[RMDB]
RNA sequence: GGGAACGACUCGAGUAGAGUCGAAAAGCUCUGUAAUGGGAUGGGAUCCGAAGCCCCAUUGAGGGAUAAUACAGGCUCUCCCAUCCAACUCCUACUCCAACACGUCCUCGUCGUACAGAGUGGUAACUAAGGUAUAGCUCCUUCGGGAGCUAUACAAGCUAGAAUUAGAGUUCGCUCUAAUUCUAGCAAAAGAAACAACAACAACAAC
Reactivity to 2A3 in 0.01 (KOAc 150mM, MgCl2 10mM, bicine 150mM(pH8.5), 24C), signal-to-noise 3, nucleotides 027 to 156: g000c000u000c020u050g050u040a080a140u150g070g000g000a000u010g000g000g010a050u190c000c020g000a080a060g020c030c010c010c020a170u100u250g060a300g010g010g010a010u130a130a050u150a130c120a030g010g000c000u000c000u000c000c010c000a000u000c000c000a000a000c000u020c010c020u030a090c000u030c030c010a100a020c050a020c100g070u090c000c020u050c020g070u030c020g000u010a000c000a000g030a000g010u050g020g040u070a130a060c060u060a130a010g070g000u000a000u000a000g000c000u010c000c020u000u020c120g060g010g000a000g000c000u000a000u000a000c010a000a000
Reactivity to DMS in 0.01 (KOAc 150mM, MgCl2 10mM, bicine 150mM(pH8.5), 24C), signal-to-noise 2, nucleotides 027 to 156: g000c010u000c010u000g020u010a040a120u010g000g030g030a040u010g010g040g010a100u000c060c000g010a190a260g000c010c000c000c000a300u000u000g020a150g000g020g000a040u000a090a150u010a060c140a220g000g000c020u010c100u000c010c010c000a090u000c020c000a040a040c040u010c010c020u010a110c030u000c050c030a100a100c060a060c090g010u000c000c030u000c010g030u000c040g020u000a030c030a070g000a060g000u010g010g030u000a060a120c100u010a050a140g010g010u010a010u010a020g010c020u000c000c050u000u000c300g050g000g000a020g000c000u000a000u010a020c030a020a130
Source: RMDB library M2RFPK, as collected in RNAgym. The record gives the reactivity of an RNA of 207 nucleotides to 2A3 and DMS. The 2A3 profile rests on 1,569 reads. For DMS, 2,493 sequencing reads were counted. The reactions ran in a buffer of 150 mM KOAc, 10 mM MgCl2 and 150 mM bicine (pH 8.5), at 24 C. Values cover nucleotides 27 to 156. DMS adducts were read by reverse transcription with MarathonRT.